[RMDB]
RNA sequence: GGGAACGACUCGAGUAGAGUCGAAAAGGAUAACUGGGUGGUCGCAGGCAAGAGCCCAUAUCGACCCUGCGGCUUGCUACUUCGAUGUCGGUUCUUUCCAUCCUGGGUGUGCAGCAGCACCCAAGGGACGACGAUACAUGUUCGCAUGUAUCGUCGUAAAAGAAACAACAACAACAAC
Reactivity to 2A3 in 0.01 (KOAc 150mM, MgCl2 10mM, bicine 150mM(pH8.5), 24C), signal-to-noise 5, nucleotides 027 to 126: g040g000a070u070a180a140c060u100g040g080g070u110g020g070u000c020g010c030a050g040g010c040a040a040g000a030g010c040c060c090a070u130a030u090c040g010a040c020c000c000u010g000c010g030g030c010u020u080g010c000u000a030c020u080u140c020g030a050u230g010u000c040g090g000u070u030c010u080u100u010c020c010a070u010c000c000u000g000g000g000u020g010u030g020c170a240g010c010a020g000c000a080c010c000c000a000a030g000g000g010
Reactivity to DMS in 0.01 (KOAc 150mM, MgCl2 10mM, bicine 150mM(pH8.5), 24C), signal-to-noise 4, nucleotides 027 to 126: g010g010a100u030a040a090c100u010g020g030g030u020g010g010u000c010g020c020a020g000g010c100a030a300g010a070g000c170c240c070a130u040a100u000c010g010a300c300c000c010u000g010c030g010g000c010u000u030g030c020u000a020c010u000u000c010g000a030u010g000u000c000g010g000u000u000c030u000u000u000c040c040a140u010c010c040u010g000g000g010u000g010u010g000c110a140g010c240a150g030c000a000c000c000c000a010a020g000g000g000